[RMDB]
RNA sequence: GGGAACGACUCGAGUAGAGUCGAAAAAGACUUGUAUUCGUACAAGUCUACAGAAAUUUCGCUAGCACACGAUCACACCUAGCGUUCUCAAUAAGGAUCGAACAACGUGUCAAUUCGUUGACACGAAACACGCCAUUAGGUUCGCCUAAUGGCGUGUAAAAGAAACAACAACAACAAC
Reactivity to 2A3 in 0.01 (KOAc 150mM, MgCl2 10mM, bicine 150mM(pH8.5), 24C), signal-to-noise 2, nucleotides 027 to 126: a000g000a000c010u010u000g000u020a010u010u100c240g020u010a000c020a010a000g010u010c000u000a010c010a040g260a060a120a070u030u030u000c000g000c010u000a000g030c030a020c010a020c120g000a020u010c010a020c060a100c140c010u030a030g050c000g000u000u010c020u020c000a000a020u120a030a000g040g000a000u010c030g020a020a010c030a030a020c020g000u020g010u020c010a030a040u080u020c180g090u090u000g010a000c010a000c000g030a020a000
Reactivity to DMS in 0.01 (KOAc 150mM, MgCl2 10mM, bicine 150mM(pH8.5), 24C), signal-to-noise 1, nucleotides 027 to 126: a020g000a000c000u010u010g040u000a010u000u000c170g000u000a010c000a010a030g000u000c010u000a050c300a240g000a080a040a070u000u000u000c010g010c000u000a000g010c020a100c280a100c030g010a000u000c000a130c150a180c150c000u000a000g010c010g010u010u000c000u020c010a180a070u000a040a000g000g010a070u040c000g010a130a040c270a090a150c010g090u000g010u000c010a000a030u000u000c150g050u010u000g000a010c000a010c000g000a020a110